[RMDB]
The record gives the reactivity of an RNA of 207 nucleotides to 2A3. The RNA was probed in 150 mM KOAc, 10 mM MgCl2 and 150 mM bicine (pH 8.5) at 24 C. Reactivities are given for positions 27 through 156. For 2A3 the reverse transcriptase was SuperScript II with manganese.
RNA sequence: GGGAACGACUCGAGUAGAGUCGAAAAGAGCAGGCUACCAUGAGACAAAAGAUCUUCUUUCUAAAGAGAUUCGAUUCGGAACUCUUAUAUGUCCAAGGUUCAAUAUUGAAAUAAUUUCAGAGGUUUUCCCUGACUUUGUCCGUGUCAACAAACAAUUUCAAUCAUAGUUGUUCGCAACUAUGAUUGAAAAAGAAACAACAACAACAAC
Reactivity to 2A3 in 0.01 (KOAc 150mM, MgCl2 10mM, bicine 150mM(pH8.5), 24C), signal-to-noise 1, nucleotides 027 to 156: g010a020g040c060a030g010g000c060u060a030c040c010a050u080g000a030g000a040c030a020a060a030a030g000a000u050c000u170u010c010u010u220u010c080u230a110a060a020g030a040g060a060u050u060c050g070a130u170u250c060g050g030a010a010c010u000c010u150u060a080u040a040u200g040u020c070c040a010a060g000g000u020u050c060a050a000u030a100u160u160g020a040a030a050u080a060a020u060u170u150c050a020g040a160g050g000u000u000u050u070c010c000c010u050g000a130c050u090u050u060g060u000c000c040g020u020g060u060c050a040a050c040a080a250a000c000a010a080u040u100